[RMDB]
RNA sequence: GGGAACGACUCGAGUAGAGUCGAAAAGAGCGUUGGCGUAUAUCGCACUUCUGGCCAUGUCCUCGUUGUGGCUUAUUAGCGAAAUAUCGGUUGUCGGAAUGCUAAUAUAUACCCGGUACCGAGGAAAGGGUAUUACUUACUUCGGUAGGUAAUACCCAAAAGAAACAACAACAACAAC
Reactivity to DMS in 0.01 (KOAc 150mM, MgCl2 10mM, bicine 150mM(pH8.5), 24C), signal-to-noise 9, nucleotides 027 to 126: g000a060g010c080g020u010u010g010g000c070g010u010a080u030a070u020c040g020c040a090c070u010u010c070u010g010g020c010c020a040u020g000u020c010c000u000c050g020u020u000g020u010g000g010c050u010u000a030u000u010a030g000c010g010a080a090a080u040a070u020c050g000g010u010u020g020u020c030g010g000a080a090u020g000c040u000a030a040u020a060u020a090u020a130c080c000c010g010g010u010a060c110c010g010a020g000g010a090a100a140
Reactivity to 2A3 in 0.01 (KOAc 150mM, MgCl2 10mM, bicine 150mM(pH8.5), 24C), signal-to-noise 9, nucleotides 027 to 126: g060a000g010c070g020u070u090g050g000c030g010u080a080u030a020u220c030g030c040a080c060u070u040c040u080g040g000c000c010a040u100g050u070c010c020u040c040g040u030u080g050u030g040g000c010u040u060a060u050u100a060g020c020g060a070a080a050u200a090u060c050g030g050u120u150g110u140c010g010g060a060a030u120g030c020u040a090a020u060a030u030a010u030a100c000c010c010g020g020u030a040c020c020g000a010g000g020a080a060a050
An RNA of 177 nucleotides, treated with DMS and 2A3 and read out base by base. Source: RMDB library OK1LIB, as collected in RNAgym. The RNA was probed in 150 mM KOAc, 10 mM MgCl2 and 150 mM bicine (pH 8.5) at 24 C.